[RMDB]
RNA sequence: GGGAACGACUCGAGUAGAGUCGAAAACAUCUCACAGGACCUAAAAGGAGUUAACGACUUCAGAUUCUUUCCAUGAAGGAAACCAAGUUUUCCUCAGUUUCUUCUUUCCUUUAAGGGCUUCAUGGUGCACUAGGUUGGGAUUCGUCCCAACCUAGUGAAAAGAAACAACAACAACAAC
Reactivity to DMS in 0.01 (KOAc 150mM, MgCl2 10mM, bicine 150mM(pH8.5), 24C), signal-to-noise 3, nucleotides 027 to 126: c170a110u010c030u000c040a130c140a100g010g000a040c040c050u000a060a040a090a070g000g000a040g010u000u000a080a090c210g000a090c040u000u000c070a090g000a160u010u020c040u000u000u010c040c020a070u010g000a050a030g000g000a020a030a040c040c070a070a140g010u010u000u000u000c040c010u000c140a120g010u010u000u000c020u020u000c080u000u020u000c020c020u010u000u000a110a090g020g010g000c030u000u000c030a040u000g000g020u000g000
Reactivity to 2A3 in 0.01 (KOAc 150mM, MgCl2 10mM, bicine 150mM(pH8.5), 24C), signal-to-noise 2, nucleotides 027 to 126: c000a050u030c020u050c040a040c040a030g050g110a080c030c040u100a070a110a030a080g020g010a020g010u040u050a110a030c050g050a020c080u020u000c040a020g040a210u110u040c020u090u100u010c060c030a060u050g040a020a000g000g000a020a000a030c020c020a130a040g000u030u000u080u050c000c010u040c010a050g010u030u050u020c030u040u030c000u010u140u050c010c020u120u200u120a070a080g000g050g040c000u000u020c000a000u040g000g020u040g020